[RMDB]
RNA sequence: GGGAACGACUCGAGUAGAGUCGAAAAAGCGGUGGAUACGUCCACCGCAACUAGGGGAUGAGUGAGAUUGUUGCAUAUUUACAUUGCUGGUAUGUAUUAUGCAACGUUUCACUCUACUCCGGGGAAAAAGCUCCAGGACAUUCGUGUCCUGGAGCUUAAAAGAAACAACAACAACAAC
Reactivity to 2A3 in 0.01 (KOAc 150mM, MgCl2 10mM, bicine 150mM(pH8.5), 24C), signal-to-noise 1, nucleotides 027 to 126: a000g010c060g080g000u050g000g000a010u010a080c250g030u030c000c000a000c020c020g000c000a000a000c000u010a020g000g000g000g040a000u000g000a000g000u060g010a000g000a000u300u300g000u020u000g000c000a000u000a040u070u070u090a000c000a000u010u020g170c090u300g120g110u100a000u000g000u010a020u020u000a000u000g000c000a000a000c000g000u000u000u000c000a000c000u000c000u000a020c000u000c000c010g090g000g040g080a070a220a000
Source: RMDB library RFM100, as collected in RNAgym. This 177-nucleotide RNA was probed chemically with 2A3. The 2A3 profile rests on 448 reads.